RNA sequence: GGGAACGACUCGAGUAGAGUCGAAAAGCGCUGGAUGGGCUGGGCGGCAAGUUCGGUGAGUCGAUCGUUAAUGGCAAUCAGAUUCUGGCGCAAUUAAAUCCGCGGCUGCCGCAGCUCGGCUAUGAUGCCAGCGGAGUUUGUUCGCAAACUCCGCUGGAAAAGAAACAACAACAACAAC
Reactivity to 2A3 in 0.01 (KOAc 150mM, MgCl2 10mM, bicine 150mM(pH8.5), 24C), signal-to-noise 1, nucleotides 027 to 126: g110c080g000c000u000g000g000a030u180g120g000g000c000u000g010g080g020c000g000g000c020a040a200g070u160u220c020g080g040u090g050a000g110u050c020g080a160u100c130g010u150u300a260a120u130g200g000c000a000a080u100c030a110g000a230u030u080c010u120g000g090c030g000c020a000a000u040u040a000a000a070u000c000c000g030c000g020g000c000u030g000c020c000g070c000a000g000c010u010c020g000g000c000u000a110u110g110a030u070g080

Structure probing data (2A3) for a 177-nucleotide construct.
Values cover nucleotides 27 to 126.
It was measured as part of the RMDB library OK1LIB.